[RMDB]
Conditions: 150 mM KOAc, 10 mM MgCl2 and 150 mM bicine (pH 8.5), 24 C. The record gives the reactivity of an RNA of 177 nucleotides to 2A3 and DMS. In probing experiments dimethyl sulfate is read out at A N1 and C N3, which are open when not base-paired. 2A3 adducts were read by reverse transcription with SuperScript II with manganese.

RNA sequence: GGGAACGACUCGAGUAGAGUCGAAAAGAUAUGGAAACUCGCUGCCAAUGAUGGAGUUCGGAAACGAACUCUUGAGGAACUACAGCCGGAGUUUCCUAAGUCAAAGUUACGACUUCGGUCGUAACAAGUACUUAAAAAAGUUCGCUUUUUUAAGUACAAAAGAAACAACAACAACAAC
Reactivity to 2A3 in 0.01 (KOAc 150mM, MgCl2 10mM, bicine 150mM(pH8.5), 24C), signal-to-noise 7, nucleotides 027 to 126: g010a010u060a020u120g000g010a010a010a000c000u010c030g090c040u040g050c050c050a300a300u150g020a010u030g010g000a010g000u010u000c000g000g000a040a040a020c000g010a000a000c000u020c000u000u010g000a010g010g060a130a060c130u230a070c270a030g030c050c160g170g000a010g000u010u000u010c000c000u000a060a000g010u000c020a080a000a180g010u000u000a000c000g000a010c020u050u120c300g140g000u000c000g000u000a000a000c000a000a010
Reactivity to DMS in 0.01 (KOAc 150mM, MgCl2 10mM, bicine 150mM(pH8.5), 24C), signal-to-noise 9, nucleotides 027 to 126: g000a030u000a170u000g000g000a010a010a010c000u000c010g020c000u010g010c020c070a090a140u010g010a130u000g000g000a010g010u000u000c000g010g000a060a040a090c000g010a010a010c000u000c000u000u000g000a300g010g010a080a050c080u010a160c010a010g000c020c300g030g010a010g010u000u000u000c000c000u000a000a060g000u000c020a080a100a120g000u000u000a000c000g000a010c000u000u010c180g020g000u000c000g010u000a000a010c000a120a140